[RMDB]
RNA sequence: GGGAACGACUCGAGUAGAGUCGAAAAGGAUGAUCUGGCCCCGGCCAGUAAUCCGAAUUAGUACCGGGAUUGCAUCGUCGAGCCGUCAGGGGCGAAGACGAGAACCUGAAAGCACGAAGCACCGGGCGGUGCGUGUGCGAGAUAUAACGCCCAACAACGAUACCAUACGGUUCGCCGUAUGGUAUCGAAAAGAAACAACAACAACAAC
Reactivity to DMS in 0.01 (KOAc 150mM, MgCl2 10mM, bicine 150mM(pH8.5), 24C), signal-to-noise 2, nucleotides 027 to 156: g030g010a010u000g000a140u030c000u010g020g000c020c000c130c280g020g000c020c000a030g000u000a140a030u010c000c010g010a100a120u010u010a070g050u000a070c160c020g040g040g020a090u000u000g000c070a160u000c050g100u010c030g000a300g050c000c000g010u010c260a200g010g000g000g020c040g010a120a120g010a030c030g000a100g020a080a090c030c020u020g000a090a060a170g040c030a070c030g010a120a270g010c030a010c030c030g040g020g010c100g000g020u010g030c000g010u000g040u000g000c030g020a050g050a080u000a060u010a170a050c030g010c000c000c000a090a050c010a300a300
Reactivity to 2A3 in 0.01 (KOAc 150mM, MgCl2 10mM, bicine 150mM(pH8.5), 24C), signal-to-noise 2, nucleotides 027 to 156: g000g000a010u030g000a060u140c020u020g000g000c000c060c090c120g140g010c000c000a000g020u030a010a000u000c000c000g010a000a020u190u090a020g040u090a090c020c040g000g010g030a080u030u200g100c100a090u030c010g060u010c030g020a000g000c000c060g140u240c230a110g160g020g070g020c030g060a020a000g010a000c010g000a010g000a000a020c000c000u020g130a120a040a010g000c010a000c030g060a120a030g010c010a000c000c000g030g120g010c140g000g000u000g000c060g040u070g000u000g000c030g040a020g050a020u170a040u030a130a030c050g010c020c060c020a040a060c070a050a040

Structure probing data (DMS and 2A3) for a 207-nucleotide construct. It was measured as part of the RMDB library OK3TST. 2A3 adducts were read by reverse transcription with SuperScript II with manganese. DMS adducts were read by reverse transcription with MarathonRT. Conditions: 150 mM KOAc, 10 mM MgCl2 and 150 mM bicine (pH 8.5), 24 C.